[RMDB]
RNA sequence: GGGAACGACUCGAGUAGAGUCGAAAACGGGGUUUCACCAUGUUGGUCAGGCUGGUCUUGAACUCCUAACCUCCAGUGAUCCACCUGCCUCAGCCUCCCAAAGUGCUGAGAUUACAGGUGUGAGCCAUAGGGAUACUAUGUUCGCAUAGUAUCCCUAAAAAGAAACAACAACAACAAC
Reactivity to DMS in 0.01 (KOAc 150mM, MgCl2 10mM, bicine 150mM(pH8.5), 24C), signal-to-noise 4, nucleotides 027 to 126: c200g020g000g000g020u000u000u000c160a070c020c030a050u010g020u000u000g010g010u000c090a070g000g010c040u000g000g000u010c120u020u010g010a040a050c040u000c010c010u010a080a160c060c020u010c070c080a090g030u000g010a160u000c030c000a010c010c010u000g000c180c010u000c000a010g000c000c010u000c060c070c080a060a070a020g010u010g020c000u000g010a020g010a040u000u010a090c010a010g000g010u000g000u000g000a040g010c040c050a150
Reactivity to 2A3 in 0.01 (KOAc 150mM, MgCl2 10mM, bicine 150mM(pH8.5), 24C), signal-to-noise 2, nucleotides 027 to 126: c020g020g000g030g010u030u080u070c030a020c020c010a050u260g020u070u100g080g130u050c050a040g000g060c030u010g040g000u060c020u090u130g020a050a040c010u000c010c000u020a070a100c010c010u090c020c030a130g010u050g130a020u000c000c000a020c010c010u000g030c020c000u000c000a010g000c000c010u100c030c070c030a110a080a000g120u140g050c000u000g010a020g000a010u080u190a030c010a020g000g050u000g030u080g040a020g070c020c000a070